An RNA of 177 nucleotides, treated with 2A3 and DMS and read out base by base. 2A3 is a SHAPE reagent: it acylates the 2'-hydroxyl of flexible nucleotides of all four kinds. DMS adducts were read by reverse transcription with MarathonRT.
RNA sequence: GGGAACGACUCGAGUAGAGUCGAAAAGUGCAACCAUCCGUCUGUAAAGGCGGUAAAUUGAUGGCUGGCCUGAUAUAAGGCUGGCGCACCGUAUCGGUGUCCCUGAGCAGACCGGCGGGACGAUUCUGUUAAAGAGCAUUUUCGAAUGCUCUUUAACAAAAGAAACAACAACAACAAC
Reactivity to 2A3 in 0.01 (KOAc 150mM, MgCl2 10mM, bicine 150mM(pH8.5), 24C), signal-to-noise 9, nucleotides 027 to 126: g090u080g040c010a030a040c020c010a050u070c010c000g020u010c000u050g160u160a110a100a100g000g000c010g000g000u010a010a010a010u070u130g090a080u130g090g000c000u000g000g000c000c000u040g080a070u050a050u090a300a010g000g010c010u000g010g000c000g000c000a010c010c000g040u150a090u270c040g010g010u020g040u040c030c000c020u070g040a050g010c020a010g030a090c020c000g010g010c020g010g000g010a030c050g030a070u170u050c030u050
Reactivity to DMS in 0.01 (KOAc 150mM, MgCl2 10mM, bicine 150mM(pH8.5), 24C), signal-to-noise 8, nucleotides 027 to 126: g020u010g020c060a110a100c050c030a130u010c000c010g010u000c000u010g010u050a060a160a020g010g010c010g000g010u000a010a050a090u020u010g000a110u010g020g010c000u000g000g010c000c000u000g010a170u020a140u030a120a030g000g000c010u010g010g000c020g000c050a040c010c020g010u010a070u030c050g010g010u000g010u010c040c020c030u010g010a170g020c060a080g000a090c040c060g010g000c150g000g000g010a080c100g010a100u010u010c060u000